[RMDB]
RNA sequence: GGGAACGACUCGAGUAGAGUCGAAAAUGUACUUAACGACUUUAACAAAAACUUAGUCGAAAUUUAUUUAACAAGCAUCAUUGAUAAUUUACAUAAUGCACAAAAAAAUGUUGGCGCUAUUAUGACGUAACAAUCCCUCUUUCGAGAGGGAUUGUUAAAAAGAAACAACAACAACAAC
Reactivity to 2A3 in 0.01 (KOAc 150mM, MgCl2 10mM, bicine 150mM(pH8.5), 24C), signal-to-noise 1, nucleotides 027 to 126: u200g040u050a060c000u010u130a030a030c000g030a000c000u000u030u300a150a050c120a060a040a050a000a040c050u060u020a000g000u020c050g100a020a070a210u030u060u000a180u050u090u050a120a120c110a070a000g050c000a050u030c000a140u090u020g140a000u000a150a070u280u220u000a000c000a000u070a000a000u000g100c040a000c040a000a000a000a010a000a080a080u200g020u050u010g000g000c090g000c030u050a000u050u000a030u180g120a020c020g010
Reactivity to DMS in 0.01 (KOAc 150mM, MgCl2 10mM, bicine 150mM(pH8.5), 24C), signal-to-noise 2, nucleotides 027 to 126: u000g010u020a030c090u000u030a050a190c010g000a030c000u020u000u010a050a120c120a030a040a140a180a110c170u000u000a010g000u000c000g000a170a120a000u010u020u000a050u060u000u030a010a050c070a130a140g000c090a040u010c030a080u010u010g000a070u020a080a030u000u000u000a130c010a000u000a010a050u010g010c000a040c130a000a000a000a130a050a070a050u000g000u000u010g000g060c140g020c040u060a030u000u000a060u020g020a090c220g000